Chemical mapping of a 177-nucleotide RNA with DMS and 2A3.
The 2A3 profile rests on 1,321 reads.
DMS (dimethyl sulfate) methylates the pairing face of unpaired adenines and cytosines.
It was measured as part of the RMDB library OK2TRN.
The reactions ran in a buffer of 150 mM KOAc, 10 mM MgCl2 and 150 mM bicine (pH 8.5), at 24 C.
Reactivities are given for positions 27 through 126.

[RMDB]
RNA sequence: GGGAACGACUCGAGUAGAGUCGAAAACGAUUGCUUUUUAUGAGCGGGACCGCUCACUACGUUAAUCAGAUGAUGGCUUAUCCGUGUGGCGUAGCGCAUGGAUAAAUGCGCGGUACUUUUUCACCGCCGCGAUGUCAUGUUUCGACAUGACAUCGCGAAAAGAAACAACAACAACAAC
Reactivity to DMS in 0.01 (KOAc 150mM, MgCl2 10mM, bicine 150mM(pH8.5), 24C), signal-to-noise 1, nucleotides 027 to 126: c070g000a090u020u010g010c070u010u000u010u010u000a110u020g010a020g010c010g000g000g030a160c180c020g030c030u000c060a030c040u000a050c160g020u000u010a090a060u030c080a070g010a150u010g010a090u000g010g000c060u000u000a010u010c000c020g020u000g000u000g000g010c100g000u000a030g000c020g000c000a000u000g000g000a060u000a000a020a100u000g010c120g020c020g010g000u020a070c210u000u040u000u000u010c100a100c020c000g000c050
Reactivity to 2A3 in 0.01 (KOAc 150mM, MgCl2 10mM, bicine 150mM(pH8.5), 24C), signal-to-noise 2, nucleotides 027 to 126: c030g070a120u140u120g070c040u230u140u100u130u150a190u210g010a000g000c000g000g060g190a150c210c030g000c000u020c010a070c030u070a000c010g040u090u180a100a010u140c010a050g050a220u080g020a020u140g190g000c020u060u020a000u020c020c000g010u000g000u020g090g050c070g060u070a040g070c000g030c000a010u000g020g000a010u080a110a090a010u150g010c070g010c000g040g000u040a080c090u120u160u030u050u130c040a020c040c020g040c050